[RMDB]
RNA sequence: GGGAACGACUCGAGUAGAGUCGAAAAGCGAUGAAGCGGCCCGCUGAGUCUGCGGGUAGGGAGCUGGAGCCGGCUGGUAACAGCCGGCCUAGAGGAAUGGUUGUCACGCACCGUUUGCCGCAAGGCGAUCCGUGUGAGGGUUCGCCCUCACACGGAUAAAAGAAACAACAACAACAAC
Reactivity to DMS in 0.01 (KOAc 150mM, MgCl2 10mM, bicine 150mM(pH8.5), 24C), signal-to-noise 1, nucleotides 027 to 126: g000c010g000a090u000g010a030a110g000c050g030g020c000c000c000g010c010u010g010a130g070u020c050u010g010c040g010g000g000u000a040g020g020g020a170g020c000u000g020g040a100g070c000c000g040g000c030u030g000g010u070a180a130c000a020g050c000c000g020g000c000c020u040a000g000a080g000g010a060a110u030g000g070u000u000g000u010c030a050c050g000c010a110c040c050g030u030u030u020g000c020c000g000c240a110a130g020g000c010g000
Reactivity to 2A3 in 0.01 (KOAc 150mM, MgCl2 10mM, bicine 150mM(pH8.5), 24C), signal-to-noise 1, nucleotides 027 to 126: g000c000g110a150u150g000a120a090g000c060g000g010c000c000c000g000c040u150g110a180g110u060c110u060g000c010g010g000g030u060a050g000g030g050a110g000c040u010g000g020a030g000c000c000g000g000c000u030g020g000u080a120a010c000a000g000c000c010g000g000c020c000u030a000g000a050g000g080a130a120u060g050g080u070u070g050u030c020a030c010g030c040a030c040c030g020u010u060u090g000c010c000g000c000a000a000g030g000c020g020

Chemical mapping of a 177-nucleotide RNA with DMS and 2A3.
Conditions: 150 mM KOAc, 10 mM MgCl2 and 150 mM bicine (pH 8.5), 24 C.
The DMS profile rests on 2,025 reads.
It was measured as part of the RMDB library RFM100.
Values cover nucleotides 27 to 126.